[RMDB]
RNA sequence: GGGAACGACUCGAGUAGAGUCGAAAAUUCUUUGGGACAAGUUGAGGUCAUGCCUCUUGGACACCAAGAAGUCCUGGGGUUUGGAAAUCCCCACAUGGCCCUCACACCCUUGUUGCCCUCAGACCUUUAGUUGUGGAAGAAACUGAGUGGAAAGGAAGAUUUAAUAGGGGUUCGCCCCUAUUAAAUCAAAAGAAACAACAACAACAAC
Reactivity to DMS in 0.01 (KOAc 150mM, MgCl2 10mM, bicine 150mM(pH8.5), 24C), signal-to-noise 1, nucleotides 027 to 156: u000u000c010u030u000u000g000g000g020a140c040a070a070g010u000u000g030a030g030g010u000c010a080u000g010c010c110u010c070u010u010g010g000a180c030a200c060c060a080a070g020a180a160g000u000c060c040u000g000g030g030g000u000u000u010g020g010a090a190a150u000c000c000c000c010a110c020a040u000g010g030c010c060c010u000c110a030c090a200c040c010c020u000u000g010u000u000g010c000c010c020u040c030a080g010a140c050c000u000u000u000a040g030u000u000g000u000g020g050a100a080g000a090a050a100c020u000g000a030g000u010g010g000a120a120a130g030g010a160a280
Reactivity to 2A3 in 0.01 (KOAc 150mM, MgCl2 10mM, bicine 150mM(pH8.5), 24C), signal-to-noise 2, nucleotides 027 to 156: u060u110c010u170u070u060g030g000g010a050c080a180a090g030u070u050g020a020g000g010u010c010a000u020g030c000c020u080c110u080u110g020g010a080c010a070c040c050a050a030g070a100a000g050u020c060c000u000g000g020g010g000u020u060u150g060g060a050a040a050u020c020c000c010c000a010c000a000u010g000g000c050c070c000u010c000a000c000a010c000c000c010u010u030g050u020u120g050c000c000c000u000c010a110g050a260c060c000u080u040u030a040g030u060u140g030u040g080g030a030a000g010a080a070a000c010u010g000a050g010u200g050g080a100a020a040g110g040a060a130